[RMDB]
RNA sequence: GGGAACGACUCGAGUAGAGUCGAAAAUGUUCGAGCGCCAGUGGUUGUCUGAGUUUCAUGUAAACAUCGCGGACUUCAUCAUCUGGGGAAUCACGAAGACUCGGCAGCAUCUCCAGGUUGCCACCGAGCCCACAUGACGGUUCGCCGUCAUGUGGGCAAAAGAAACAACAACAACAAC
Reactivity to 2A3 in 0.01 (KOAc 150mM, MgCl2 10mM, bicine 150mM(pH8.5), 24C), signal-to-noise 2, nucleotides 027 to 126: u180g030u240u180c050g000a010g110c030g000c000c000a000g000u000g090g030u040u030g000u000c060u050g000a010g270u030u030u030c290a300u150g150u210a000a030a040c000a030u150c070g000c030g060g000a000c000u030u000c020a200u000c000a000u090c050u000g010g000g000g060a060a170u050c000a070c270g000a020a000g210a180c050u030c000g000g000c090a110g000c000a030u040c000u070c000c000a030g080g060u010u010g000c030c020a000c000c000g000a040